RNA sequence: GGGAACGACUCGAGUAGAGUCGAAAAAACGAUAAGAACGGAAACCGUAUGGCGUUCGCUUCUGUUGAUACUCAAGAGGGUGUCAGAGAGUUAGUCAUCUUUAGUUACAUCUAUGGAGCAAACAGCGACGUUAUCAAGAAAAAUAAAAAGGUGAUGGCUACAUAAUCUAGUUCGCUAGAUUAUGUAGAAAAGAAACAACAACAACAAC
Reactivity to DMS in 0.01 (KOAc 150mM, MgCl2 10mM, bicine 150mM(pH8.5), 24C), signal-to-noise 5, nucleotides 027 to 156: a060a050c050g000a150u000a060a040g000a070a060c020g000g010a080a040a040c020c030g020u000a120u000g040g010c020g010u000u000c000g040c010u000u000c020u020g010u000u010g020a140u000a040c020u000c020a080a150g030a250g020g000g000u000g010u000c050a090g000a140g010a110g020u000u000a080g010u000c050a070u000c020u000u000u000a090g020u010u000a050c070a060u000c030u000a120u000g010g010a080g000c040a080a060a060c080a090g020c030g000a090c060g020u000u000a070u000c060a070a120g020a020a080a050a060a110u010a040a040a060a060a050g020g040u000g010a060u000g020g010
Reactivity to 2A3 in 0.01 (KOAc 150mM, MgCl2 10mM, bicine 150mM(pH8.5), 24C), signal-to-noise 9, nucleotides 027 to 156: a000a000c080g020a090u130a090a070g060a080a010c030g020g040a120a050a040c050c030g040u120a070u060g040g010c020g040u130u070c020g020c010u050u050c020u060g140u110u020g020a030u040a080c000u020c040a090a060g080a150g110g020g010u020g010u020c030a010g030a010g010a000g070u120u090a030g020u090c030a070u000c100u030u040u020a040g030u080u110a050c030a050u030c020u040a050u110g040g000a020g020c040a050a060a050c020a040g000c000g010a010c010g020u020u020a030u070c020a020a050g120a080a090a020a010a010u210a050a090a040a010a010g030g020u070g040a060u080g060g010